[RMDB]
RNA sequence: GGGAACGACUCGAGUAGAGUCGAAAACGCUAAACACCAGUCACAGACGCUAAAACUCACGCUACGUCAAGACGGAUGUGACAGCGCGAAAGCUAGCGCAAGCUUUAGCGUUACGUACGAGUAGCGAAAUUAUAUUAUUAUUCGUAAUAAUAUAAUUAAAAGAAACAACAACAACAAC
Reactivity to DMS in 0.01 (KOAc 150mM, MgCl2 10mM, bicine 150mM(pH8.5), 24C), signal-to-noise 5, nucleotides 027 to 126: c010g010c000u020a020a020a020c080a120c150c090a100g010u000c010a020c030a020g010a080c010g000c070u010a050a070a110a060c040u000c060a130c020g010c020u000a020c030g000u020c080a100a050g010a130c010g010g000a080u000g000u010g000a010c030a130g020c010g000c000g020a100a110a080g050c150u020a120g010c020g010c020a140a080g010c190u000u000u000a030g000c000g000u000u000a040c120g010u020a060c100g000a090g000u010a010g000c010g000a170
Reactivity to 2A3 in 0.01 (KOAc 150mM, MgCl2 10mM, bicine 150mM(pH8.5), 24C), signal-to-noise 6, nucleotides 027 to 126: c010g000c010u020a010a010a000c060a070c060c050a040g010u010c000a000c000a010g040a040c020g000c030u080a060a040a100a040c030u060c050a060c030g010c020u040a000c010g120u050c060a030a020g100a070c000g010g000a010u010g000u000g010a000c010a020g000c000g000c010g080a170a090a040g110c120u160a050g010c020g010c050a050a020g020c010u000u000u000a000g000c000g010u010u050a030c030g020u030a040c060g020a030g040u010a000g010c000g010a040